Overview
Structure probing data (2A3 and DMS) for a 207-nucleotide construct. DMS adducts were read by reverse transcription with MarathonRT. Conditions: 150 mM KOAc, 10 mM MgCl2 and 150 mM bicine (pH 8.5), 24 C.
[RMDB]
RNA sequence: GGGAACGACUCGAGUAGAGUCGAAAAAACUCUUUACGGCAAUAACGAACUAAUUCUAAGCAAGUAAUGGAGAAAUGCCAGGGUCACUAUCUAGCCAUAAUAGUGCUUGACAGUAUGAUACUAACUGAAUAUGGUAAACCGUUCGCGGUUUACCAAAGCCCAAUUAGAGAUUCGUCUCUAAUUGGGCAAAAGAAACAACAACAACAAC
Reactivity to 2A3 in 0.01 (KOAc 150mM, MgCl2 10mM, bicine 150mM(pH8.5), 24C), signal-to-noise 2, nucleotides 027 to 156: a000a000c070u070c030u030u040u040a070c030g030g000c030a010a060u100a150a020c060g050a050a040c040u140a110a110u090u160c070u090a080a040g000c050a130a130g000u070a020a020u080g010g010a020g050a070a050a050u060g010c000c020a010g020g010g000u040c000a000c020u010a010u020c010u010a020g020c010c020a060u060a200a070u100a100g090u040g010c010u010u030g020a030c000a010g060u120a080u130g070a030u110a200c040u060a200a050c040u050g060a100a040u140a080u210g000g000u000a000a000a000c000c000g000u000u030c090g020c000g050g000u000u000u000a000c000c000a000a000a000
Reactivity to DMS in 0.01 (KOAc 150mM, MgCl2 10mM, bicine 150mM(pH8.5), 24C), signal-to-noise 1, nucleotides 027 to 156: a050a040c010u000c000u010u000u000a000c000g000g030c040a020a130u000a070a160c100g000a100a120c100u010a080a070u020u000c050u000a100a090g000c000a090a050g000u010a070a080u000g030g020a120g030a040a050a020u020g000c030c010a020g050g040g010u000c040a030c010u000a070u000c000u000a070g050c070c040a150u010a050a140u000a030g020u010g000c000u000u010g040a040c000a010g010u010a030u000g000a060u000a040c000u010a070a110c050u000g000a090a120u010a100u030g010g020u000a000a020a030c000c010g040u000u010c300g030c010g030g020u000u000u000a000c000c000a000a040a130